[RMDB]
RNA sequence: GGGAACGACUCGAGUAGAGUCGAAAACUGUGUAUUGCAUUAACCAUAUUAACAUUUGUUGCUUUUCACACGGUAGUAAAUAUGGUGUUGAAAGGAGGAGACGGGCGGGCGCAGUGGCUCAUGCCUGCUGCGUACGCUGCUUCGGCAGCGUACGCAGAAAAGAAACAACAACAACAAC
Reactivity to DMS in 0.01 (KOAc 150mM, MgCl2 10mM, bicine 150mM(pH8.5), 24C), signal-to-noise 2, nucleotides 027 to 126: c040u000g000u000g000u000a060u000u000g030c040a090u030u000a110a120c050c040a040u000a070u010u000a050a080c100a150u010u010u010g030u010u000g020c050u000u010u000u000c080a040c060a000c050g010g020u000a070g020u000a050a040a050u000a020u000g000g010u000g000u030u000g000a020a050a070g000g000a070g000g010a100g000a050c150g010g000g010c040g010g020g000c040g000c050a060g010u010g000g000c050u000c140a050u010g030c070c020u000g000
Reactivity to 2A3 in 0.01 (KOAc 150mM, MgCl2 10mM, bicine 150mM(pH8.5), 24C), signal-to-noise 1, nucleotides 027 to 126: c020u020g000u020g080u130a080u140u230g000c030a030u100u250a080a020c060c020a000u020a060u120u090a140a130c150a150u070u050u230g150u070u100g120c000u080u020u150u170c040a000c010a010c000g110g000u050a040g020u030a010a090a090u040a020u000g080g000u030g080u100u180g040a000a010a070g010g010a070g000g000a080g020a010c110g050g010g100c000g010g020g030c000g000c020a020g000u020g070g000c060u090c050a020u080g020c030c030u010g000
Structure probing data (DMS and 2A3) for a 177-nucleotide construct. Values cover nucleotides 27 to 126. 2A3 adducts were read by reverse transcription with SuperScript II with manganese. The RNA was probed in 150 mM KOAc, 10 mM MgCl2 and 150 mM bicine (pH 8.5) at 24 C. For DMS the reverse transcriptase was MarathonRT. Values are in units of 0.01, from 0 to 300, in steps of 10.